Source information:
An RNA of 177 nucleotides, treated with 2A3 and DMS and read out base by base.
RNA sequence: GGGAACGACUCGAGUAGAGUCGAAAAGAUCAAUUUUAUUUAGUAAGGGUAAUAAAAAUGUAUGUGUUUUGCCACUGCCAGUUUGCGAUUGACCAAUGACAUUUUUCCCCUUUUGAAUCAUUGGUAACCAUCAUCCUAUCUUCGGAUAGGAUGAUGGAAAAGAAACAACAACAACAAC
Reactivity to 2A3 in 0.01 (KOAc 150mM, MgCl2 10mM, bicine 150mM(pH8.5), 24C), signal-to-noise 1, nucleotides 027 to 126: g010a060u030c020a050a010u070u070u170u200a100u030u170u090a080g060u020a030a050g040g000g020u010a050a090u090a130a130a010a020a020u100g070u110a080u080g110u020g000u040u050u120u080g040c000c030a060c010u060g030c030c050a100g060u040u050u030g050c020g020a010u040u070g040a010c020c000a000a000u040g010a030c060a020u080u070u100u000u040c030c000c000c000u110u100u000u100g070a010a020u040c010a000u000u000g000g000u020a050a020
Reactivity to DMS in 0.01 (KOAc 150mM, MgCl2 10mM, bicine 150mM(pH8.5), 24C), signal-to-noise 2, nucleotides 027 to 126: g010a080u000c050a040a100u000u000u000u000a040u010u020u010a120g010u000a060a080g000g000g010u010a070a050u010a020a010a040a040a060u010g010u000a050u000g020u000g020u000u000u010u010g000c030c020a020c030u010g000c040c080a010g030u010u000u010g010c180g000a080u000u010g000a060c000c000a020a020u000g000a020c090a070u010u000u000u000u010c050c010c000c170u000u000u000u010g000a070a240u000c100a040u010u020g000g010u020a090a190
Source: RMDB library OK2TST, as collected in RNAgym. The reactions ran in a buffer of 150 mM KOAc, 10 mM MgCl2 and 150 mM bicine (pH 8.5), at 24 C.